An RNA of 177 nucleotides, treated with DMS and 2A3 and read out base by base.
RNA sequence: GGGAACGACUCGAGUAGAGUCGAAAAGUGAAAUGUGAGGUGGUUUGUGCACAGGGCUUAUUGGUCGGGAGAGAGCUCCCUCAGGAGGUGGCAGAGUACAGUGGCUCUGAGGAGUGUCUGCCACACAUCGCUGCAUGUAGUUCGCUACAUGCAGCGAAAAAGAAACAACAACAACAAC
Reactivity to DMS in 0.01 (KOAc 150mM, MgCl2 10mM, bicine 150mM(pH8.5), 24C), signal-to-noise 1, nucleotides 027 to 126: g000u000g000a030a090a040u000g090u000g000a120g000g030u010g000g020u000u000u010g000u010g000c020a050c090a100g000g030g100c130u000u040a130u050u000g020g030u000c160g010g010g010a100g060a140g000a160g000c000u060c060c000c000u000c130a000g000g000a140g010g030u000g000g000c010a010g000a060g000u000a000c150a090g010u030g040g000c000u000c000u020g020a140g000g000a000g000u030g000u010c040u030g000c020c000a050c040a040c080a080
Reactivity to 2A3 in 0.01 (KOAc 150mM, MgCl2 10mM, bicine 150mM(pH8.5), 24C), signal-to-noise 2, nucleotides 027 to 126: g130u160g010a090a020a030u130g030u040g000a060g000g010u090g120g000u000u000u300g020u000g000c130a000c020a060g000g000g010c020u000u110a180u090u170g020g050u020c000g040g000g000a010g000a000g000a000g030c000u060c000c000c010u040c080a100g100g020a000g040g000u020g000g040c000a000g000a000g070u120a040c180a120g020u140g210g000c010u040c000u070g130a200g000g030a000g020u030g090u000c000u020g050c030c000a070c040a000c000a000
Background: Source: RMDB library OK1LIB, as collected in RNAgym. The reactions ran in a buffer of 150 mM KOAc, 10 mM MgCl2 and 150 mM bicine (pH 8.5), at 24 C. The DMS profile rests on 1,838 reads.